[RMDB]
RNA sequence: GGGAACGACUCGAGUAGAGUCGAAAAGGAAGCCUGGAAGGGCCGACCAUUCCCUAUGAGGUGCUUACGCAAAUCAGAGUGAGUGAUCUGCCUUCUCCUUUCCAUAUGGUGGACAUCAGGAAAAUUGAAUAGGUCAGAGGUUCGCCUCUGACCUAUUAAAAGAAACAACAACAACAAC
Reactivity to DMS in 0.01 (KOAc 150mM, MgCl2 10mM, bicine 150mM(pH8.5), 24C), signal-to-noise 2, nucleotides 027 to 126: g000g000a140a160g030c130c010u000g000g000a070a030g000g020g000c030c050g010a060c010c020a000u000u010c000c060c000u010a050u000g020a030g000g040u020g000c000u010u080a170c230g000c030a000a090a150u020c010a030g050a020g020u000g010a000g000u000g000a070u010c000u000g000c010c000u010u060c130u010c000c000u000u010u010c000c040a020u030a120u000g010g030u000g000g000a030c070a060u030c060a030g020g030a080a050a070a010u000u070g030
Reactivity to 2A3 in 0.01 (KOAc 150mM, MgCl2 10mM, bicine 150mM(pH8.5), 24C), signal-to-noise 4, nucleotides 027 to 126: g040g010a060a030g130c000c050u020g050g020a040a030g020g000g010c000c010g010a030c000c010a010u000u000c030c000c000u020a030u030g010a030g020g020u050g040c030u280u160a070c120g000c000a030a000a020u010c000a000g000a000g020u020g000a030g000u000g000a030u000c010u030g010c000c000u070u020c080u000c040c000u030u030u040c030c000a060u050a080u240g150g010u100g030g080a060c050a090u060c100a120g090g090a090a090a040a090u230u230g020
About this RNA:
The record gives the reactivity of an RNA of 177 nucleotides to DMS and 2A3. The RNA was probed in 150 mM KOAc, 10 mM MgCl2 and 150 mM bicine (pH 8.5) at 24 C. 2A3 adducts were read by reverse transcription with SuperScript II with manganese. It was measured as part of the RMDB library OK1LIB. High 2A3 reactivity points to a flexible backbone, as in loops and unpaired stretches.